[RMDB]
RNA sequence: GGGAACGACUCGAGUAGAGUCGAAAAGAUAUGGACCACUCCCCACCUCGCAAUGAGUCGUUGAAACUCGAUAACGUCGGAAACGACGUUAUCGAGUGGAGACUUGACGAGAGGUGGUCCUAAGUCACACAAAAAGUAUGUUCGCAUACUUUUUGUGAAAAGAAACAACAACAACAAC
Reactivity to DMS in 0.01 (KOAc 150mM, MgCl2 10mM, bicine 150mM(pH8.5), 24C), signal-to-noise 6, nucleotides 027 to 126: g010a100u020a210u000g010g010a030c010c020a020c040u010c170c010c010c070a300c120c000u000c010g010c100a180a140u010g010a020g010u000c000g010u000u020g000a240a170a040c000u000c010g020a010u000a000a000c010g010u000c000g000g000a110a080a250c010g010a010c000g000u000u000a000u000c000g000a000g010u000g000g000a130g010a010c000u000u000g000a090c060g000a030g000a080g020g000u000g020g010u010c000c000u000a060a120g010u020c180a270
Reactivity to 2A3 in 0.01 (KOAc 150mM, MgCl2 10mM, bicine 150mM(pH8.5), 24C), signal-to-noise 3, nucleotides 027 to 126: g060a080u290a160u270g000g000a010c000c010a020c060u230c040c030c010c000a010c010c000u000c000g010c030a080a150u300g020a040g020u000c010g080u130u030g000a030a000a000c000u000c000g000a000u000a020a000c020g000u000c000g010g030a060a090a040c010g020a010c000g000u010u000a000u000c000g000a000g000u000g000g000a010g000a000c000u000u040g160a060c010g010a010g000a020g010g020u000g000g010u000c000c000u010a030a030g130u050c040a000